An RNA of 177 nucleotides, treated with 2A3 and DMS and read out base by base. Values are in units of 0.01, from 0 to 300, in steps of 10. The DMS profile rests on 1,198 reads. For 2A3 the reverse transcriptase was SuperScript II with manganese. DMS adducts were read by reverse transcription with MarathonRT.
RNA sequence: GGGAACGACUCGAGUAGAGUCGAAAACAAGGGCUAAACACCCUCGCCCCGAAGCAAGUAAGAUAGAGAAAAAGCGGUUCUCGGGAGCUUCAGUUGUUUCCACCGGGUAAUAGCCGAAGCGACAGCGGAGAUAAAUACCGUUCGCGGUAUUUAUCUCAAAAGAAACAACAACAACAAC
Reactivity to 2A3 in 0.01 (KOAc 150mM, MgCl2 10mM, bicine 150mM(pH8.5), 24C), signal-to-noise 2, nucleotides 027 to 126: c020a020a010g010g000g000c000u060a050a100a020c040a060c060c020c000u010c000g030c010c000c000c010g060a070a010g030c030a040a040g050u200a040a030g050a230u190a090g070a030g030a070a040a050a060a010g140c020g060g020u010u000c030u010c030g000g050g030a050g000c030u050u030c010a010g000u040u030g000u010u030u000c040c040a180c060c080g200g000g000u050a060a000u030a090g010c000c000g020a050a000g000c020g040a060c050a040g080c080g060
Reactivity to DMS in 0.01 (KOAc 150mM, MgCl2 10mM, bicine 150mM(pH8.5), 24C), signal-to-noise 2, nucleotides 027 to 126: c140a090a030g000g000g050c000u010a100a100a130c280a250c020c000c020u010c060g010c010c000c030c050g000a080a080g000c080a070a110g000u000a090a080g010a100u010a070g000a070g010a020a050a050a170a110g010c060g050g010u000u000c010u000c020g010g000g010a120g010c010u000u010c050a040g010u010u000g000u000u000u010c010c010a110c120c160g000g040g000u010a010a010u010a040g000c010c000g000a040a060g020c020g000a070c100a090g020c090g020